[RMDB]
RNA sequence: GGGAACGACUCGAGUAGAGUCGAAAAGAUAUGGAAGCCUAGCGAGGUACCCAUGUACUACCCACCCUCGUGUUCGGAAACGAACACGAGGAGGUACCGCUGGGUACCUCGCUAGGCUUCCUAAGUCCAAACAAACUAUGUUCGCAUAGUUUGUUUGAAAAGAAACAACAACAACAAC
Reactivity to DMS in 0.01 (KOAc 150mM, MgCl2 10mM, bicine 150mM(pH8.5), 24C), signal-to-noise 1, nucleotides 027 to 126: g000a140u000a300u000g000g000a030a010g040c000c030u000a020g050c010g020a010g030g000u000a000c030c030c020a010u010g000u000a050c080u010a050c050c160c110a300c170c010c010u010c000g000u010g010u000u020c020g000g020a100a090a190c000g000a050a040c020a010c000g010a000g000g000a010g000g000u010a000c030c050g000c020u000g010g000g030u010a010c020c000u000c030g030c000u020a000g030g010c000u000u000c000c000u020a010a040g000u000c020